[RMDB]
RNA sequence: GGGAACGACUCGAGUAGAGUCGAAAAGAUCUAGUCAAAGCCCUCAUAUACUUAAAUUAGGUUUGGCUUUGUGGAGCUAGCCACCUUAUAACCGGCCUAGUUAAGACAACUCACUUGGGAGAUCACAACAAGUUGGGGAAUUCGUUCCCCAACUUGUAAAAGAAACAACAACAACAAC
Reactivity to DMS in 0.01 (KOAc 150mM, MgCl2 10mM, bicine 150mM(pH8.5), 24C), signal-to-noise 1, nucleotides 027 to 126: g000a120u000c010u000a030g010u000c060a140a040a120g010c020c000c040u040c110a040u000a100u040a080c040u040u000a020a050a080u000u000a010g020g010u000u040u010g140g040c040u000u010u030g020u000g000g030a100g050c040u000a080g010c020c020a040c010c220u000u000a040u000a050a150c060c030g010g010c000c060u020a020g000u000u000a040a150g000a100c170a080a090c090u000c030a040c090u000u000g010g010g020a090g000a050u020c050a120c270a070
Annotation:
The record gives the reactivity of an RNA of 177 nucleotides to DMS. The reactions ran in a buffer of 150 mM KOAc, 10 mM MgCl2 and 150 mM bicine (pH 8.5), at 24 C. The data come from the RNA Mapping Database (RMDB), library OK2TRN. DMS adducts were read by reverse transcription with MarathonRT. For DMS, 548 sequencing reads were counted.